RNA sequence: GGGAACGACUCGAGUAGAGUCGAAAAAGCAGGUUAACAAGCAUUAAUACUAAAUGUGUUUCAUCGUCUACUUAUUGCUAAACAAAUUGAUUGUUCAUCAAAUUUGCAAUUCGUUAGUUGGGUUAAAGAUUUAGAGAGUCUUCGGACUCUCUAAAUCAAAAGAAACAACAACAACAAC
Reactivity to 2A3 in 0.01 (KOAc 150mM, MgCl2 10mM, bicine 150mM(pH8.5), 24C), signal-to-noise 1, nucleotides 027 to 126: a000g070c080a050g020g030u060u040a080a000c050a020a100g070c000a000u170u100a130a030u110a230c090u140a080a160a100u090g020u030g030u040u040u020c020a070u070c000g060u000c000u000a010c030u000u010a010u030u000g000c020u110a090a040a040c070a030a000a140u000u000g010a060u130u150g080u250u060c010a000u010c000a030a000a160u060u020u050g050c000a000a020u010u000c020g020u000u010a060g000u010u050g080g000g000u000u030a000a050a050
Reactivity to DMS in 0.01 (KOAc 150mM, MgCl2 10mM, bicine 150mM(pH8.5), 24C), signal-to-noise 1, nucleotides 027 to 126: a080g000c070a050g030g020u030u010a030a050c110a060a040g000c030a060u000u010a060a080u010a060c100u000a100a100a040u000g010u010g010u000u000u000c030a120u000c040g000u000c020u000a010c030u000u010a070u010u000g010c010u030a060a030a070c110a040a030a100u000u000g000a020u000u020g030u030u010c130a070u010c050a010a040a220u000u000u010g000c010a030a030u000u000c050g010u000u000a050g050u000u000g030g020g000u000u000a040a100a140